The record gives the reactivity of an RNA of 177 nucleotides to DMS and 2A3. Values cover nucleotides 27 to 126. For DMS the reverse transcriptase was MarathonRT.
[RMDB]
RNA sequence: GGGAACGACUCGAGUAGAGUCGAAAAGGCGGUGUGCGCGACGAGACGCGCAACGAGUCCGGCAGCGGCUUACAGCUUUCGCAGGGCGCGCAGGGCGACGUGCAGGGCAGCGACCUCGUUGGCAACGAGACACUAUGCCUUUCGAGGCAUAGUGUCUAAAAGAAACAACAACAACAAC
Reactivity to DMS in 0.01 (KOAc 150mM, MgCl2 10mM, bicine 150mM(pH8.5), 24C), signal-to-noise 2, nucleotides 027 to 126: g000g010c050g010g000u010g050u010g020c040g010c000g000a060c070g020a090g020a180c000g020c030g000c000a030a030c070g010a300g020u000c010c020g010g000c100a080g010c070g020g010c040u010u020a060c210a160g000c030u000u010u000c270g010c030a100g040g000g000c020g020c090g000c070a100g030g000g020c040g000a080c080g000u000g000c050a130g020g020g010c070a090g000c030g010a130c060c010u000c040g000u000u000g010g000c020a060a090c060g000
Reactivity to 2A3 in 0.01 (KOAc 150mM, MgCl2 10mM, bicine 150mM(pH8.5), 24C), signal-to-noise 1, nucleotides 027 to 126: g000g040c020g200g000u190g060u040g180c090g070c030g080a020c060g020a030g010a070c060g020c020g000c090a010a030c030g010a000g030u030c010c000g070g030c040a060g080c000g050g020c000u040u140a070c060a110g010c000u100u230u170c090g020c050a060g000g000g040c020g000c010g060c020a020g000g000g010c020g010a190c020g010u070g000c050a090g030g100g050c040a000g000c000g010a040c000c010u010c040g010u040u060g020g010c030a050a010c070g040